[RMDB]
RNA sequence: GGGAACGACUCGAGUAGAGUCGAAAAGUUCGACCUGAAACACGAGAUCCAUGAACUAUACAAAUCGAAAAUCAUCAUUGCUGCCAACGAGGAAGAAUUAGUGUAUAGGGGCUUAGGAGGAAGAGAACGAAAGUACGUACUUCGGUACGUACUUUCGAAAAGAAACAACAACAACAAC
Reactivity to DMS in 0.01 (KOAc 150mM, MgCl2 10mM, bicine 150mM(pH8.5), 24C), signal-to-noise 2, nucleotides 027 to 126: g020u000u000c040g000a060c000c010u000g010a200a090a040c110a070c070g000a100g000a070u000c050c090a070u010g030a080a120c080u000a020u020a050c100a030a050a100u040c100g010a060a090a080a090u000c060a010u000c040a040u000u000g010c050u000g020c060c040a040a190c120g010a040g000g000a030a040g000a020a050u000u010a080g020u000g000u000a030u000a060g000g000g010g000c080u010u000a060g000g080a050g000g030a060a040g010a090g000a070a180
Reactivity to 2A3 in 0.01 (KOAc 150mM, MgCl2 10mM, bicine 150mM(pH8.5), 24C), signal-to-noise 1, nucleotides 027 to 126: g060u060u030c010g060a050c060c010u020g000a040a120a000c000a040c160g060a050g040a110u000c040c000a050u070g040a060a020c030u050a030u020a160c000a000a040a180u110c040g170a090a090a040a010u090c020a000u030c020a050u020u140g000c050u060g050c020c010a040a000c080g010a040g020g010a010a030g000a020a070u100u050a100g010u030g030u070a030u000a060g050g050g000g000c040u000u050a050g000g000a030g010g050a100a000g110a020g020a090a000